Overview:
Chemical mapping of a 177-nucleotide RNA with 2A3. For 2A3 the reverse transcriptase was SuperScript II with manganese. The reactions ran in a buffer of 150 mM KOAc, 10 mM MgCl2 and 150 mM bicine (pH 8.5), at 24 C. Reactivities are rounded to 0.1 and cut off at 0 and 3.
RNA sequence: GGGAACGACUCGAGUAGAGUCGAAAAAUUUAAAUGCCAGGACGGUCACCUUUGGGGUGGUGACAAGUGUGAUCACUUGGGUGGUGGCUGUGUUUGCGAAUCUCCCAGGAAUCUCGUUUACCAGAUCACUGCCAGUACCAUUCGUGGUACUGGCAGUAAAAGAAACAACAACAACAAC
Reactivity to 2A3 in 0.01 (KOAc 150mM, MgCl2 10mM, bicine 150mM(pH8.5), 24C), signal-to-noise 1, nucleotides 027 to 126: a000u050u190u150a070a030a060u120g050c000c000a000g170g000a000c000g000g000u020c020a000c010c000u140u100u090g140g000g020g000u040g000g000u020g010a030c000a000a140g230u240g060u080g220a050u110c000a000c020u100u090g000g000g110u040g040g040u030g040g000c000u000g000u000g050u000u010u010g000c010g000a060a020u020c010u000c130c000c000a000g030g000a010a010u050c010u000c090g000u030u000u000a120c000c000a000g000a170u200c020